[RMDB]
RNA sequence: GGGAACGACUCGAGUAGAGUCGAAAAUUCACGUGCAGAAACGUUAUCGAAGCGUGCGAUGGGUAAUGAUAAUCGUGAGGUAACACCAACAGGGAAGCCACAGAGUCUUUCGCGAGAGUCAGCCUUUGCAGCGGCGACUGAGGAUGAGGCACAGAAAAGUAGCUAUCCUAUUCGUAGGAUAGCUACUAAAAGAAACAACAACAACAAC
Reactivity to DMS in 0.01 (KOAc 150mM, MgCl2 10mM, bicine 150mM(pH8.5), 24C), signal-to-noise 1, nucleotides 027 to 156: u000u000c050a000c100g040u000g000c030a150g010a090a040a060c060g000u010u000a160u010c010g040a190a220g020c060g000u010g000c020g020a070u000g010g000g000u010a050a110u010g020a080u000a040a110u000c020g010u010g000a100g000g030u010a070a100c070a200c060c010a060a140c040a160g020g010g000a140a140g000c060c030a110c090a120g020a100g010u000c000u000u010u000c080g010c020g010a080g050a260g030u000c000a050g010c010c000u000u000u000g030c040a000g020c030g020g010c040g030a000c050u020g000a060g040g030a080u010g010a100g020g040c020a100c070a100g010a050a050a060
Reactivity to 2A3 in 0.01 (KOAc 150mM, MgCl2 10mM, bicine 150mM(pH8.5), 24C), signal-to-noise 3, nucleotides 027 to 156: u100u110c020a020c060g040u010g000c040a010g120a080a070a000c040g030u110u110a070u050c010g020a060a030g060c070g080u100g000c030g000a030u080g030g040g000u120a160a090u080g060a050u050a040a090u070c000g010u030g040a030g010g020u070a030a020c060a050c100c000a080a060c030a080g000g000g100a060a020g060c030c000a070c060a100g080a030g140u030c010u010u080u040c010g030c000g030a010g010a000g070u030c070a020g030c010c000u060u100u130g020c060a100g090c060g030g020c010g040a060c010u030g010a010g040g000a000u080g010a040g020g000c020a010c030a060g160a060a070a000
The record gives the reactivity of an RNA of 207 nucleotides to DMS and 2A3. Source: RMDB library OK3TST, as collected in RNAgym. The DMS profile rests on 1,914 reads. Conditions: 150 mM KOAc, 10 mM MgCl2 and 150 mM bicine (pH 8.5), 24 C.